[RMDB]
RNA sequence: GGGAACGACUCGAGUAGAGUCGAAAAAUAAAGUAGUCUCCUGCAGCGUCUGAGGUUUCCGUUGCAGUCCUCGGAUCCAGGACCUCGGCGUGGCCUAGCGAGUUAUGGCGACGAAGGCCGUGAAAAACGAAGUUCUAAUGUUCGCAUUAGAACUUCGAAAAGAAACAACAACAACAAC
Reactivity to DMS in 0.01 (KOAc 150mM, MgCl2 10mM, bicine 150mM(pH8.5), 24C), signal-to-noise 2, nucleotides 027 to 126: a070u010a080a070a070g020u000a130g010u010c030u000c030c000u000g000c050a170g010c100g020u010c030u000g000a050g020g000u000u000u010c030c060g030u000u000g020c080a100g010u010c050c010u010c150g000g010a070u000c080c070a090g010g000a020c080c000u010c020g000g020c040g060u000g000g010c020c040u000a120g010c040g000a120g020u010u010a090u010g000g000c030g020a070c050g000a120a090g030g000c000c010g040u000g010a030a050a050a080a150
Reactivity to 2A3 in 0.01 (KOAc 150mM, MgCl2 10mM, bicine 150mM(pH8.5), 24C), signal-to-noise 1, nucleotides 027 to 126: a000u210a010a110a030g090u080a000g030u010c020u010c050c000u050g040c010a060g020c000g010u010c080u140g040a010g000g070u050u080u000c040c030g090u110u130g020c050a030g040u060c000c000u060c010g040g000a020u050c020c010a020g080g010a020c010c000u000c000g000g000c010g010u010g000g040c000c000u020a040g020c000g010a020g020u090u160a150u210g090g030c000g030a100c030g040a110a050g080g050c020c020g020u100g010a100a060a000a010a010
The data come from the RNA Mapping Database (RMDB), library M2PK90. This 177-nucleotide RNA was probed chemically with DMS and 2A3. For DMS the reverse transcriptase was MarathonRT. For 2A3, 1,325 sequencing reads were counted.